[RMDB]
RNA sequence: GGGAACGACUCGAGUAGAGUCGAAAAGAUAUGGAUGCUGUUGUCAGCGAUAUUGAAAGGCUUUGAUCAACGAUCGGAAACGAUCGUUGGGAGCCUCGUACGUAUCGCUUGGAUUUACAGCAUCCUAAGUCAAAAGCAAAUGCUUCGGCAUUUGCAACAUGGUUACUAACUUCGGUUAGUAACCAUGAAAAGAAACAACAACAACAAC
Reactivity to DMS in 0.01 (KOAc 150mM, MgCl2 10mM, bicine 150mM(pH8.5), 24C), signal-to-noise 3, nucleotides 027 to 156: g010a100u000a280u000g010g000a010u000g020c010u000g020u000u010g010u010c020a090g030c000g010a030u000a010u000u000g020a190a010a010g020g020c030u000u000u010g010a200u000c000a030a030c000g010a020u000c000g030g050a240a130a260c020g010a010u000c000g020u000u000g010g020g000a030g000c000c000u010c010g010u000a300c300g000u000a000u000c000g000c010u000u020g030g020a040u000u000u000a030c000a020g000c020a010u000c000c010u000a010a070g010u000c040a070a090a140a120g020c000a000a010a020u000g010c010u000u010c300g060g010c000a010u000u000u000g000c020a060a060
Reactivity to 2A3 in 0.01 (KOAc 150mM, MgCl2 10mM, bicine 150mM(pH8.5), 24C), signal-to-noise 8, nucleotides 027 to 156: g040a020u080a030u140g000g000a000u000g000c000u000g010u030u020g010u020c010a000g000c000g000a000u020a010u030u190g140a080a040a000g030g000c020u230u200u090g110a120u190c000a000a000c000g000a000u010c000g020g000a070a080a040c020g000a000u000c000g000u000u010g000g000g000a000g000c000c000u010c010g030u100a040c040g000u000a000u000c000g000c000u020u090g070g000a030u200u210u150a010c000a000g000c000a000u000c000c000u000a010a000g020u000c030a050a040a070a050g000c000a000a000a000u010g000c010u050u110c290g070g000c000a000u000u000u000g000c000a000a010